[RMDB]
RNA sequence: GGGAACGACUCGAGUAGAGUCGAAAAACCUUAUUUUGAGAAGCUGAGGGAUUUGGCCCAUAGAAGCUUCAGCAACCGACUUUAAAUAGCACGGUGCUAAUACCAACGAGCAACUCGAAUGAUAAGUGGGGAAUUGAGAAUUCGUUCUCAAUUCCCCAAAAGAAACAACAACAACAAC
Reactivity to 2A3 in 0.01 (KOAc 150mM, MgCl2 10mM, bicine 150mM(pH8.5), 24C), signal-to-noise 1, nucleotides 027 to 126: a000c170c000u250u000a300u090u070u000u040g020a000g000a000a000g000c000u010g000a150g000g010g000a010u010u110u070g070g000c000c000c000a010u040a080g080a010a000g000c000u000u000c000a000g000c000a000a000c000c000g000a020c010u000u000u300a210a300a200u200a080g000c000a000c000g010g000u010g000c000u000a040a040u010a130c000c000a040a150c060g030a000g010c020a060a170c100u100c010g130a020a070u030g000a120u000a090a120g080u080
This 177-nucleotide RNA was probed chemically with 2A3. It was measured as part of the RMDB library RFM100. 2A3 adducts were read by reverse transcription with SuperScript II with manganese.